RNA sequence: GGGAACGACUCGAGUAGAGUCGAAAAUUGAGGCACGUUCUUUCCGGCAUAUCGUUCACCGGGAUGAACAGGUUGCAAGUCCUGGCCAAAACAUCAGGUGGUGCUGGUUUUGGUGCUCUGGCCGGAGGAGGAUGUUACGGUUCGCCGUAACAUCCUCAAAAGAAACAACAACAACAAC
Reactivity to 2A3 in 0.01 (KOAc 150mM, MgCl2 10mM, bicine 150mM(pH8.5), 24C), signal-to-noise 1, nucleotides 027 to 126: u010u070g070a100g000g040c090a000c070g010u000u000c030u000u100u000c020c010g000g050c070a130u160a090u250c190g120u150u090c040a010c010c000g000g020g020a020u030g000a010a000c000a020g090g020u160u020g030c030a000a010g030u050c010c000u000g060g000c020c000a080a050a010a000c010a160u160c030a010g000g050u090g010g030u030g050c010u020g010g000u050u030u000u010g050g030u020g000c020u000c020u070g100g000c020c050g030g030a020g040
Reactivity to DMS in 0.01 (KOAc 150mM, MgCl2 10mM, bicine 150mM(pH8.5), 24C), signal-to-noise 1, nucleotides 027 to 126: u000u000g000a050g010g020c050a090c060g010u000u000c020u020u000u000c010c010g010g000c080a080u000a120u010c090g000u010u010c140a300c000c000g000g020g000a010u000g000a040a010c020a060g030g000u000u020g000c100a030a100g000u000c020c040u000g010g010c010c010a000a000a020a020c040a040u020c010a040g010g010u000g020g000u010g010c010u000g000g000u000u000u000u000g020g030u000g040c010u000c070u010g010g000c090c060g010g030a100g010